[RMDB]
RNA sequence: GGGAACGACUCGAGUAGAGUCGAAAAAGCUUUGGCCAUGGCCAUGGGUGAGAUUUGGCACCCAGAGCCUCCAGGGGCCUCAGCUUAUUGUGCACUGCCCCAUGUGCAGCUGUGGAACCCAGGCCCUCUUACAAAACAAGUUCGCUUGUUUUGUAAGAAAAGAAACAACAACAACAAC
Reactivity to 2A3 in 0.01 (KOAc 150mM, MgCl2 10mM, bicine 150mM(pH8.5), 24C), signal-to-noise 9, nucleotides 027 to 126: a000g080c080u130u080u060g010g000c010c060a110u070g030g000c010c020a100u010g010g000g020u060g040a150g040a300u170u230u300g130g010c000a010c000c000c010a000g010a010g000c010c010u020c030c030a070g040g010g000g050c000c010u010c010a000g000c000u060u060a180u140u220g110u110g000c000a000c010u070g020c010c010c010c020a030u080g020u020g010c040a010g000c020u020g000u030g030g040a110a180c000c000c020a030g010g010c000c000c000u010
Reactivity to DMS in 0.01 (KOAc 150mM, MgCl2 10mM, bicine 150mM(pH8.5), 24C), signal-to-noise 7, nucleotides 027 to 126: a060g000c060u000u030u010g000g010c020c030a110u010g010g030c020c140a120u000g010g000g010u010g000a070g010a190u030u020u030g010g020c000a020c020c000c000a020g000a300g000c000c010u010c160c090a170g010g010g010g010c000c010u000c010a000g000c020u010u020a030u030u010g000u010g000c010a030c010u000g010c080c020c030c050a170u010g010u000g000c010a050g010c060u000g010u000g010g020a060a060c010c010c010a160g010g000c030c020c200u020